This 177-nucleotide RNA was probed chemically with DMS and 2A3. Source: RMDB library OK2TRN, as collected in RNAgym. The RNA was probed in 150 mM KOAc, 10 mM MgCl2 and 150 mM bicine (pH 8.5) at 24 C. For DMS the reverse transcriptase was MarathonRT.
RNA sequence: GGGAACGACUCGAGUAGAGUCGAAAACAUACAGAAAAUAUGAAAGCGAUAAUGAGUGGGGUUUAAGUUUUUAUGAUGAGGUUGUAACCCAUCUUGAGUGUAUCCAAAUGCUUCGUAAAUGUGCUCAGUCGAUUAUAGCAUUCGUGCUAUAAUCGACAAAAGAAACAACAACAACAAC
Reactivity to DMS in 0.01 (KOAc 150mM, MgCl2 10mM, bicine 150mM(pH8.5), 24C), signal-to-noise 2, nucleotides 027 to 126: c080a040u010a110c090a060g010a130a090a070a130u000a040u000g040a040a080a080g000c010g020a080u000a060a060u010g010a120g000u000g030g000g000g030u000u000u020a050a150g010u020u000u000u000u010a020u040g010a040u000g000a090g010g000u000u010g040u020a080a130c020c010c000a040u000c040u020u000g020a060g020u010g020u000a050u010c060c030a120a070a090u000g010c040u000u010c050g020u010a030a080a070u000g000u000g020c060u000c070a150
Reactivity to 2A3 in 0.01 (KOAc 150mM, MgCl2 10mM, bicine 150mM(pH8.5), 24C), signal-to-noise 1, nucleotides 027 to 126: c000a000u250a030c030a080g180a130a210a000a040u140a000u060g130a080a020a040g020c000g100a090u060a250a060u190g040a030g040u050g010g120g000g000u000u140u060a130a080g000u000u000u060u120u150a110u150g080a050u060g000a060g050g030u160u100g110u140a060a030c000c070c000a000u010c000u070u010g080a150g030u110g010u000a010u040c010c020a000a140a070u070g020c060u030u010c010g050u040a000a050a150u040g000u030g040c020u010c030a020
The DMS profile rests on 1,344 reads. High 2A3 reactivity points to a flexible backbone, as in loops and unpaired stretches.